An RNA of 170 nucleotides, treated with DMS and read out base by base.
For DMS, 6,915 sequencing reads were counted.
For DMS the reverse transcriptase was MarathonRT.
[RMDB]
RNA sequence: GGGAACGACUCGAGUAGAGUCGAAAAAGCACAUCCAGAGGACCCCUUCGACGAACAGAAGGAUCUGGUACCGGGGAGGAAUAGCCCAUAGUACAAGGGGAGAUGCUAGGAGUCAGGGGAAGCCAGAAAGGGAUGCGGUUCGCCGCAUCCAAAAGAAACAACAACAACAAC
Reactivity to DMS in 0.01 (KOAc 150mM, MgCl2 10mM, bicine 150mM(pH8.5), 24C), signal-to-noise 4, nucleotides 027 to 129: a030g070c130a160c100a110u030c000c060a050g040a110g050g000a110c090c150c030c050u040u010c050g000a180c170g060a050a080c150a110g020a060a060g020g030a070u010c020u010g040g010u010a080c170c000g000g000g000g000a010g110g020a070a040u050a000g020c010c010c020a140u080a070g080u040a060c090a110a080g030g040g020g020a050g020a030u030g030c090u050a090g000g030a050g020u040c070a050g000g000g090g000a050a060g060c100c020a080g010a080a120a040g010